[RMDB]
RNA sequence: GGGAACGACUCGAGUAGAGUCGAAAAGCACGAUAUAACUUUUCUAUCGGAGCAAUACGUUGGAGAUGAUACGUUGUUUUACUGUAAGUUACACACAACUGAUAGGACAAAGGUUCAACAAAUGAUCCCAAAUCAUGCCAUUCGUGGCAUGAUUUGGAAAAGAAACAACAACAACAAC
Reactivity to 2A3 in 0.01 (KOAc 150mM, MgCl2 10mM, bicine 150mM(pH8.5), 24C), signal-to-noise 3, nucleotides 027 to 126: g020c010a010c010g020a020u000a000u080a160a200c060u200u110u200u030c020u020a020u000c050g080g000a280g000c010a070a030u050a090c120g010u010u000g090g030a230g000a090u040g020a010u090a030c070g020u020u000g040u020u000u030u050a060c030u020g000u040a000a050g040u110u070a100c210a010c030a000c000a120a040c020u000g020a140u060a100g000g000a010c020a020a120a050g090g000u070u130c020a030a010c000a030a210a020u170g030a080u130c000
Reactivity to DMS in 0.01 (KOAc 150mM, MgCl2 10mM, bicine 150mM(pH8.5), 24C), signal-to-noise 2, nucleotides 027 to 126: g010c070a030c000g000a030u000a010u010a080a040c120u000u030u020u000c100u000a000u000c000g060g000a240g020c090a120a040u030a030c120g070u000u030g000g010a110g000a090u060g050a190u010a090c110g000u000u000g010u020u020u000u000a150c060u010g000u010a130a090g060u000u000a060c190a060c300a040c130a010a060c010u000g000a020u010a010g000g010a050c060a050a100a010g000g000u020u000c010a000a060c150a000a080a040u050g000a020u000c000